[RMDB]
RNA sequence: GGGAACGACUCGAGUAGAGUCGAAAAUGUGAUACUAUCAAAUUCACUACUAUUAAUAAUGUUGUGUAUAUAUUCUAGAUGUGUGUCUUUAAUAACGUUUGUUAAGUCAUCACCAGUAUAAUAAUCCUCGAUAUACGAUAGGUCUCCUAAUAACUCACAGGUCUACACUUUUCGAAGUGUAGACCUGAAAAGAAACAACAACAACAAC
Reactivity to 2A3 in 0.01 (KOAc 150mM, MgCl2 10mM, bicine 150mM(pH8.5), 24C), signal-to-noise 2, nucleotides 027 to 156: u140g010u000g000a050u030a140c040u020a020u130c030a000a100a100u130u050c000a000c040u180a010c000u030a050u210u080a220a120u210a080a060u170g010u040u000g000u000g020u000a020u000a020u000a030u300u100c040u030a090g010a150u060g070u010g040u020g020u070c000u030u140u010a070a060u050a090a060c060g010u020u050u110g040u040u070a090a030g040u040c010a010u020c000a030c010c010a020g060u040a000u050a270a020u030a020a100u110c010c020u030c040g040a000u000a030u030a130c060g020a030u030a030g050g020u000c020u000c040c020u100a130a130u150a130a100c050u080c150a040
Reactivity to DMS in 0.01 (KOAc 150mM, MgCl2 10mM, bicine 150mM(pH8.5), 24C), signal-to-noise 1, nucleotides 027 to 156: u000g010u000g010a130u010a180c100u000a110u000c090a090a120a200u020u010c020a020c000u030a190c080u010a300u010u000a120a140u000a140a140u000g010u000u000g020u000g000u010a090u010a080u000a060u000u010c010u000a070g020a040u040g030u000g010u020g010u000c000u010u000u020a030a080u000a100a090c080g010u000u000u000g000u000u000a030a060g000u010c030a000u010c040a070c050c030a100g030u000a080u020a090a090u000a090a090u000c020c030u000c040g030a110u000a060u000a040c070g030a140u000a020g010g010u000c020u030c030c030u010a030a010u000a030a140c040u000c020a300